[RMDB]
RNA sequence: GGGAACGACUCGAGUAGAGUCGAAAAGAAAGAAAAGAAAGAAAAUCAGAGCCCAAAUAAACCGAGAUAACCUAAUCUCAUCGGUGGAGAUGAAAAGGACGCAUACGUCCAAAGGGCUCUGAAAGAACCUCAGUGCUGGAUUCGUCCAGCACUGAGGAAAAGAAACAACAACAACAAC
Reactivity to DMS in 0.01 (KOAc 150mM, MgCl2 10mM, bicine 150mM(pH8.5), 24C), signal-to-noise 1, nucleotides 027 to 126: g010a060a080a120g020a030a000a030a180g020a070a270a060g060a000a050a020a070u000c000a000g000a010g000c000c000c000a060a180a100u000a090a020a000c010c000g020a000g000a000u060a080a040c220c180u000a040a010u080c070u030c080a130u000c000g000g020u000g000g000a120g000a030u070g000a000a100a070a100g000g000a020c000g080c230a080u040a070c060g000u020c040c000a030a060a120g010g030g030c040u000c000u080g000a000a110a030g000a130a200
Reactivity to 2A3 in 0.01 (KOAc 150mM, MgCl2 10mM, bicine 150mM(pH8.5), 24C), signal-to-noise 1, nucleotides 027 to 126: g070a050a040a040g110a020a040a010a000g080a050a220a000g080a000a080a090a000u010c020a000g000a000g000c000c000c000a000a070a000u020a020a000a000c030c000g020a000g000a060u130a090a010c000c150u020a020a140u010c100u000c050a220u020c010g000g010u000g100g010a250g000a080u110g060a020a270a000a000g000g000a040c030g000c040a060u100a300c130g020u010c000c000a020a020a020g000g000g010c000u030c000u000g000a000a020a000g000a060a020

An RNA of 177 nucleotides, treated with DMS and 2A3 and read out base by base.
For 2A3 the reverse transcriptase was SuperScript II with manganese.
It was measured as part of the RMDB library OK1LIB.
The DMS profile rests on 1,089 reads.
The reactions ran in a buffer of 150 mM KOAc, 10 mM MgCl2 and 150 mM bicine (pH 8.5), at 24 C.